[RMDB]
RNA sequence: GGGAACGACUCGAGUAGAGUCGAAAAGUUCAGUAACUUCCAUAAUAUGUGUAAACUAGCGAGAACGGAAGGUAUCUUGAAGAGCUUAUUUUAAUGGGAAAAACAGUUCGGUUUGUUUAGAAGUUAAAAGUUUUAUCAUCUAACAAUUUGGUGUAAAAUAUGGAGUAUAGUUCGCUAUACUCCAUAUAAAAGAAACAACAACAACAAC
Reactivity to DMS in 0.01 (KOAc 150mM, MgCl2 10mM, bicine 150mM(pH8.5), 24C), signal-to-noise 3, nucleotides 027 to 156: g010u010u000c020a120g000u000a030a060c020u000u000c020c020a090u010a110a130u000a100u010g040u000g020u000a090a100a100c060u000a140g040c040g010a150g010a130a100c060g010g010a060a020g010g000u000a030u000c040u010u000g010a060a140g010a080g020c020u000u000a040u010u000u000u000a050a110u000g010g010g010a060a070a070a070a060c040a040g010u010u000c070g030g010u000u000u000g010u010u000u000a070g000a140a160g010u010u000a030a050a080a160g020u000u020u010u000a050u010c010a030u000c020u000a070a110c050a040a140u000u010u000g010g030u010g010u000a050a040a110
Reactivity to 2A3 in 0.01 (KOAc 150mM, MgCl2 10mM, bicine 150mM(pH8.5), 24C), signal-to-noise 3, nucleotides 027 to 156: g010u040u060c020a030g020u040a060a060c020u010u030c000c010a030u050a200a090u130a100u120g080u010g040u090a110a130a090c040u050a040g060c030g050a020g040a120a000c030g000g020a010a000g020g010u020a060u060c030u030u080g040a110a060g000a040g010c010u030u030a030u050u090u050u040a060a020u060g040g000g000a030a050a020a020a090c000a050g020u040u040c020g060g070u030u080u070g040u030u080u080a030g000a070a010g000u040u140a080a090a020a000g020u010u090u050u090a030u050c010a020u010c010u100a070a080c010a060a080u170u110u190g030g000u050g050u060a050a130a000
This 207-nucleotide RNA was probed chemically with DMS and 2A3. The 2A3 profile rests on 1,896 reads. It was measured as part of the RMDB library OK3TST. DMS adducts were read by reverse transcription with MarathonRT.